[RMDB]
RNA sequence: GGGAACGACUCGAGUAGAGUCGAAAAAUUACGGGCGGCGCAGGUGGAGCUGCGAUCCCUCCGCCCAUCGCGUGCUCUCUCGGUGGCCCAGACGCUGCAAACGGACAGGCGGGCCACCUGCAACGAACACCUAUAGACGUUUCGACGUCUAUAGGUGAAAAGAAACAACAACAACAAC
Reactivity to 2A3 in 0.01 (KOAc 150mM, MgCl2 10mM, bicine 150mM(pH8.5), 24C), signal-to-noise 3, nucleotides 027 to 126: a000u200u130a070c060g010g000g020c020g010g000c040g000c000a000g020g040u120g080g100a060g090c030u020g020c030g060a060u050c000c010c010u020c000c010g000c000c000c010a030u090c030g030c030g020u040g010c010u040c000u010c030u040c180g000g010u000g010g000c010c000c030a030g050a070c150g040c140u030g010c050a150a210a170c070g070g130a080c010a000g040g010c000g020g010g000c000c000a000c000c000u000g000c000a030a030c010g050a040a010
Reactivity to DMS in 0.01 (KOAc 150mM, MgCl2 10mM, bicine 150mM(pH8.5), 24C), signal-to-noise 3, nucleotides 027 to 126: a070u010u000a100c160g020g020g000c010g000g000c110g010c110a020g010g010u000g030g010a160g000c030u000g010c030g020a120u000c020c010c000u010c020c010g020c020c010c010a110u010c060g020c060g020u000g000c020u000c080u000c100u000c170g000g010u000g000g010c000c000c000a110g010a080c050g010c000u000g010c080a070a080a130c300g000g000a220c030a030g010g000c080g000g000g000c010c000a000c010c000u000g010c070a110a060c100g000a080a170
The record gives the reactivity of an RNA of 177 nucleotides to 2A3 and DMS. The reactions ran in a buffer of 150 mM KOAc, 10 mM MgCl2 and 150 mM bicine (pH 8.5), at 24 C. Source: RMDB library M2PK90, as collected in RNAgym. For 2A3 the reverse transcriptase was SuperScript II with manganese. The DMS profile rests on 2,096 reads.